[RMDB]
RNA sequence: GGGAACGACUCGAGUAGAGUCGAAAAUGUUAUACCCUGUGGGGACUUGCCAAGUCAAAGACAGCUCUCUACUUCAGAAAAGUACUUCUGUCCCUCCUGACUCUCCUCAGACUGGACAUUAGUAAACUACUCCAACUAUUUUCGAAUAGUUGGAGUAAAAAGAAACAACAACAACAAC
Reactivity to 2A3 in 0.01 (KOAc 150mM, MgCl2 10mM, bicine 150mM(pH8.5), 24C), signal-to-noise 2, nucleotides 027 to 126: u080g000u080u040a070u090a140c000c000c000u040g000u040g010g080g000g000a020c010u050u070g060c030c010a070a040g040u120c050a080a000a050g040a030c010a010g000c010u010c000u030c010u040a060c000u060u110c060a030g090a170a150a010a000g030u020a020c010u010u020c000u020g000u000c000c000c000u030c000c020u020g000a030c010u020c020u030c120c010u000c000a010g020a100c030u050g000g000a010c010a050u010u020a040g070u090a060a000a070c040
Reactivity to DMS in 0.01 (KOAc 150mM, MgCl2 10mM, bicine 150mM(pH8.5), 24C), signal-to-noise 4, nucleotides 027 to 126: u010g000u000u000a090u020a180c040c000c010u010g020u000g000g020g010g010a040c060u000u010g010c050c050a060a100g000u000c120a060a090a110g010a050c050a060g000c100u000c020u000c030u010a060c080u000u020c110a100g000a080a090a090a080g010u000a020c060u000u000c030u000g010u000c020c030c050u000c030c010u000g010a070c080u010c100u000c110c080u000c020a050g000a060c070u000g000g010a030c050a050u000u010a060g000u000a050a090a120c140